[RMDB]
RNA sequence: GGGAACGACUCGAGUAGAGUCGAAAAACUACUUUGCCCAUCCGACACCUUCGAUGGUUGAGACAAUGGUCCCGGGCACCAUUGCCGGAGAAUUGUCGAUGCUGUCCGGGCUCGAGCGGAACGCGACACAGACGAGAUCGUUCGCGAUCUCGUCUGUAAAAGAAACAACAACAACAAC
Reactivity to DMS in 0.01 (KOAc 150mM, MgCl2 10mM, bicine 150mM(pH8.5), 24C), signal-to-noise 2, nucleotides 027 to 126: a140c070u000a060c130u010u000u010g010c010c010c040a150u010c030c000g030a130c050a060c100c020u000u000c270g030a090u010g010g000u000u010g000a300g000a080c030a040a040u000g000g000u010c090c000c080g020g000g000c040a070c090c110a040u000u010g000c020c000g030g020a140g020a050a100u000u000g030u000c000g000a080u000g010c210u010g050u010c010c080g010g000g020c180u030c040g000a040g000c030g000g030a060a140c070g010c060g000a130c230
Reactivity to 2A3 in 0.01 (KOAc 150mM, MgCl2 10mM, bicine 150mM(pH8.5), 24C), signal-to-noise 1, nucleotides 027 to 126: a000c100u200a040c020u090u070u280g050c040c000c010a020u000c030c000g050a060c000a000c060c020u130u150c090g100a090u000g000g000u000u000g040a060g000a050c040a030a100u080g010g050u070c060c030c050g000g050g000c070a040c040c040a120u100u180g040c010c000g040g100a080g270a090a230u080u060g040u030c000g000a020u020g000c020u000g050u020c000c020g000g000g000c040u050c040g080a060g040c010g000g030a040a020c040g040c030g060a010c020
This 177-nucleotide RNA was probed chemically with DMS and 2A3. The reactions ran in a buffer of 150 mM KOAc, 10 mM MgCl2 and 150 mM bicine (pH 8.5), at 24 C.